[RMDB]
RNA sequence: GGGAACGACUCGAGUAGAGUCGAAAAGAUAUGGAUCCCACUCAGCGACGAAGCCACGUAACAUCAGUCGGAAACGACUGUGGUGGCAGAGCUGGAGGAUCCUAAGUCAAAGGUCCGUUCGCGGACCGACGUAAUGCGUCUUCGGACGCAUUACGUCAAAAGAAACAACAACAACAAC
Reactivity to 2A3 in 0.01 (KOAc 150mM, MgCl2 10mM, bicine 150mM(pH8.5), 24C), signal-to-noise 3, nucleotides 027 to 126: g010a010u050a040u060g000g010a020u020c010c060c100a250c060u300c030a010g020c010g300a300c020g010a300a000g040c000c010a020c010g080u180a220a070c070a300u300c030a020g010u000c000g010g030a010a030a000c010g020a000c000u000g010u030g050g000u010g020g000c010a010g000a010g000c010u000g000g000a030g000g000a010u000c000c000u010a030a000g020u020c060a290a130a020g000g000u010c010c010g010u070u090c300g010c000g140g010a000c000c000
Reactivity to DMS in 0.01 (KOAc 150mM, MgCl2 10mM, bicine 150mM(pH8.5), 24C), signal-to-noise 4, nucleotides 027 to 126: g010a040u000a140u010g000g000a000u000c000c000c040a200c140u020c030a010g010c020g010a120c260g010a120a120g000c000c000a000c000g010u010a130a170c160a100u000c000a010g000u000c000g020g000a060a040a040c000g000a020c000u000g010u000g030g020u000g030g030c010a010g000a050g010c010u000g000g000a180g000g010a010u010c010c000u010a010a090g010u000c020a080a130a160g010g010u000c000c000g030u000u020c290g040c040g010g000a000c000c020